[RMDB]
Structure probing data (2A3 and DMS) for a 177-nucleotide construct.
The reactions ran in a buffer of 150 mM KOAc, 10 mM MgCl2 and 150 mM bicine (pH 8.5), at 24 C.

RNA sequence: GGGAACGACUCGAGUAGAGUCGAAAAGGGCCACGGCCUUCCCGUGGCGUCGGCAGUCGGCGCUGGUGCAGUGGUACGUCGAAACAUCCGGCUCCCCGUCGGAAGCGACUAGCUGGCUCAACACCGCGCCCUAGCAACUAUUCGUAGUUGCUAGGGCAAAAGAAACAACAACAACAAC
Reactivity to 2A3 in 0.01 (KOAc 150mM, MgCl2 10mM, bicine 150mM(pH8.5), 24C), signal-to-noise 4, nucleotides 027 to 126: g030g000g000c000c010a010c030g050g000c000c020u080u040c000c000c000g010u020g000g000c010g000u050c020g030g010c050a050g130u110c020g000g000c010g010c030u080g040g080u150g050c070a050g020u110g110g060u120a070c030g030u010c010g030a040a150a150c040a130u010c010c000g000g020c010u070c010c050c010c000g040u050c050g000g010a030a010g020c030g090a120c030u040a070g030c090u010g030g000c000u010c090a040a040c040a030c040c010g010c000
Reactivity to DMS in 0.01 (KOAc 150mM, MgCl2 10mM, bicine 150mM(pH8.5), 24C), signal-to-noise 1, nucleotides 027 to 126: g000g000g030c000c000a040c120g000g000c150c150u000u030c060c010c000g000u020g040g000c000g060u040c070g000g040c180a090g000u020c070g010g020c000g030c040u020g000g010u040g000c020a060g090u030g040g000u040a050c160g020u000c010g000a100a050a110c100a150u000c070c060g000g000c030u010c010c070c090c080g000u020c090g000g000a020a010g020c020g000a020c020u000a110g110c020u000g000g000c000u000c110a120a190c050a100c070c000g000c080